[RMDB]
RNA sequence: GGGAACGACUCGAGUAGAGUCGAAAAAGAGGUAGCCGAACCCGACUGCCGCGGUGAAGACGACGAUCGUCACGAGUUGUUUCGCCUUCGCCGUCGACGGCCGUCGCAGGAGCGACGACAGUCGGUCCCCAGGGCUGCGUUUCGACGCAGCCCUGGGAAAAGAAACAACAACAACAAC
Reactivity to 2A3 in 0.01 (KOAc 150mM, MgCl2 10mM, bicine 150mM(pH8.5), 24C), signal-to-noise 1, nucleotides 027 to 126: a000g120a020g060g050u010a010g000c020c020g070a100a110c000c020c020g020a020c050u060g020c010c020g000c000g040g010u010g000a000a000g000a000c000g000a010c030g000a060u080c040g210u160c110a070c190g090a260g090u040u010g040u040u100u050c020g000c000c000u000u000c000g000c000c000g010u030c000g010a050c000g000g040c010c020g000u000c000g000c020a090g090g300a290g010c000g000a000c010g020a000c040a010g000u030c000g000g050u070c020